[RMDB]
RNA sequence: GGGAACGACUCGAGUAGAGUCGAAAAGUUUACGCUCCAAGAUCGGUGGAUAGCAGCCCUAUCAAUAUCGAGGAGAACUGUGCUAUGUUUAGAAGAUUAGGUAGUCUCUAAACAGAACAAUUUACCUCAUACGUUAGGACGUUCGCGUCCUAACGAACAGACGAGCAAACUUCGGUUUGCUCGUCUGAAAAGAAACAACAACAACAAC
Reactivity to 2A3 in 0.01 (KOAc 150mM, MgCl2 10mM, bicine 150mM(pH8.5), 24C), signal-to-noise 2, nucleotides 027 to 156: g040u050u060u070a110c080g000c000u000c020c010a050a000g050a090u070c110g080g170u130g060g000a030u040a060g070c040a020g010c010c010c020u030a050u090c060a080a060u040a070u170c010g030a000g000g010a060g000a030a010c070u060g000u020g040c000u040a030u150g000u030u000u000a080g000a300a020g000a040u040u040a040g050g040u040a010g000u000c000u000c000u000a000a000a010c030a050g090a030a030c080a010a020u030u100u220a140c010c010u070c040a090u110a150c010g000u000u000a000g000g000a000c000g000u000u100c120g020c010g100u000c000c000u020a000a000c000g000a000a010
An RNA of 207 nucleotides, treated with 2A3 and read out base by base. Reactivities are rounded to 0.1 and cut off at 0 and 3. The data come from the RNA Mapping Database (RMDB), library M2RFPK.